[RMDB]
RNA sequence: GGGAACGACUCGAGUAGAGUCGAAAAUGAUUAUAAUUGGAUACAGCCAUAUUAACAAAUGGUUAUUCAACAUGAAUGCCUAAAACUAGCUCACACUCAGCCUGUCUCUGGUUCUGUUUUCUGCAGGAAAGCUCCUCCUUUGUAACUGUCCUCAGAGAGACUGAUUGUAUUUCGAUACAAUCAGUCUAAAAGAAACAACAACAACAAC
Reactivity to DMS in 0.01 (KOAc 150mM, MgCl2 10mM, bicine 150mM(pH8.5), 24C), signal-to-noise 2, nucleotides 027 to 156: u000g010a140u030u020a090u000a100a130u000u010g020g030a070u000a040c130a080g070c000c010a040u000a120u000u000a120a180c210a100a100a050u000g040g020u000u000a050u010u000c020a050a090c060a090u000g000a090a090u000g000c020c030u000a060a050a090a110c040u000a060g010c030u000c030a090c070a110c050u010c060a120g010c000c030u000g020u000c030u000c010u000g020g030u000u000c010u000g000u000u000u000u000c050u000g020c080a070g030g010a050a040a110g010c000u010c050c010u000c060c020u020u000u000g030u000a020a040c020u000g000u000c010c030u000c040a120g000a170g020
Reactivity to 2A3 in 0.01 (KOAc 150mM, MgCl2 10mM, bicine 150mM(pH8.5), 24C), signal-to-noise 4, nucleotides 027 to 156: u070g020a020u080u140a070u140a230a120u040u030g020g010a020u040a100c080a030g010c010c000a020u070a060u140u190a150a100c060a080a170a020u030g010g000u040u040a020u030u020c020a050a040c040a100u150g110a090a040u070g020c030c040u090a110a110a040a050c050u030a040g050c010u030c040a030c000a010c040u080c020a020g020c010c010u050g020u030c010u000c000u040g020g040u090u010c020u010g050u040u060u090u050c040u060g030c030a020g080g000a070a020a010g020c020u030c000c010u050c010c000u070u080u050g050u040a040a040c020u060g010u050c000c010u070c060a020g070a010g010

About this RNA
Source: RMDB library OK3TST, as collected in RNAgym. Chemical mapping of a 207-nucleotide RNA with DMS and 2A3. For 2A3, 2,674 sequencing reads were counted. The reactions ran in a buffer of 150 mM KOAc, 10 mM MgCl2 and 150 mM bicine (pH 8.5), at 24 C. For DMS the reverse transcriptase was MarathonRT.